[RMDB]
RNA sequence: GGGAACGACUCGAGUAGAGUCGAAAAGGGAAUCAACACAAAGCUGAACCAAUCAGCAAUACUAAUCUUCUUACUGAGAAAACUGUGGCUUCAGUAAAAUUAGCGGGCAAUUCAUCUCUUUGCCCCAUUAAUGGAUGGGCUGUAUACAGUAAGGACAAUAAUCAUGUAACUUCGGUUACAUGAUUAUAAAAGAAACAACAACAACAAC
Reactivity to DMS in 0.01 (KOAc 150mM, MgCl2 10mM, bicine 150mM(pH8.5), 24C), signal-to-noise 5, nucleotides 027 to 156: g000g030g010a110a120u000c040a090a100c070a120c060a060a110a300g020c010u000g020a050a140c090c090a140a190u000c010a050g010c000a100a080u020a150c080u000a080a200u000c080u000u000c040u000u000a080c050u000g000a110g000a130a100a060a070c100u000g010u010g010g020c030u000u000c000a070g010u010a030a060a300a060u000u000a050g020c130g020g020g030c010a020a040u010u000c110a090u000c160u010c100u000u000u000g020c010c010c000c020a040u000u000a050a070u000g000g010a130u000g020g030g010c020u000g000u000a090u000a100c030a050g010u010a030a050g000g010a050c060a090
Reactivity to 2A3 in 0.01 (KOAc 150mM, MgCl2 10mM, bicine 150mM(pH8.5), 24C), signal-to-noise 8, nucleotides 027 to 156: g050g020g040a060a100u160c070a090a140c060a030c050a160a160a030g010c010u020g010a070a070c040c010a050a190u050c010a010g010c010a030a020u100a080c070u090a060a110u040c060u090u020c010u030u030a010c010u020g020a010g130a160a140a110a070c080u090g030u090g060g030c020u210u230c090a040g010u110a020a060a060a060u060u050a030g020c190g040g010g000c020a020a010u140u140c040a160u090c120u050c000u110u030u020g010c000c000c010c000a010u080u130a040a050u050g060g030a030u030g010g020g000c010u020g010u050a070u010a080c000a000g010u010a020a010g010g000a000c020a040
Structure probing data (DMS and 2A3) for a 207-nucleotide construct. The RNA was probed in 150 mM KOAc, 10 mM MgCl2 and 150 mM bicine (pH 8.5) at 24 C. For DMS the reverse transcriptase was MarathonRT. Reactivities are given for positions 27 through 156. In probing experiments dimethyl sulfate is read out at A N1 and C N3, which are open when not base-paired.